[RMDB]
RNA sequence: GGGAACGACUCGAGUAGAGUCGAAAAUCGGAAAUGAGACGGUAAAUGGUCACCGGACGCUGCUGUCCCAUGCGAUGACACCGAUCCUCGGCCUGUUUAUCGUUGUACGGGUUGAAGUCGAUAUCGAACUCACUGCAUUAUUCGUAAUGCAGUGAGUAAAAGAAACAACAACAACAAC
Reactivity to 2A3 in 0.01 (KOAc 150mM, MgCl2 10mM, bicine 150mM(pH8.5), 24C), signal-to-noise 2, nucleotides 027 to 126: u070c000g010g070a010a060a130u090g010a080g030a050c030g010g000u070a100a120a070u170g100g000u050c020a050c180c000g090g010a010c030g040c100u090g010c010u030g030u000c020c020c000a050u120g040c040g040a040u030g020a020c010a010c030c020g040a060u000c010c030u020c000g010g010c010c000u010g000u000u040u030a070u070c060g010u000u090g000u030a050c030g030g030g000u030u050g070a050a000g050u090c060g050a050u040a050u220c050g030a030
Reactivity to DMS in 0.01 (KOAc 150mM, MgCl2 10mM, bicine 150mM(pH8.5), 24C), signal-to-noise 6, nucleotides 027 to 126: u010c030g000g000a090a080a060u000g000a100g010a030c010g000g010u000a030a080a060u010g010g010u000c040a120c140c160g020g020a030c060g010c120u000g010c040u000g010u000c010c010c090a080u000g010c090g010a050u000g010a080c090a080c060c020g010a080u000c040c040u000c070g010g020c030c010u010g010u000u000u000a040u000c130g010u000u000g020u000a050c040g000g000g000u000u010g010a040a090g000u000c030g000a080u000a080u010c090g000a140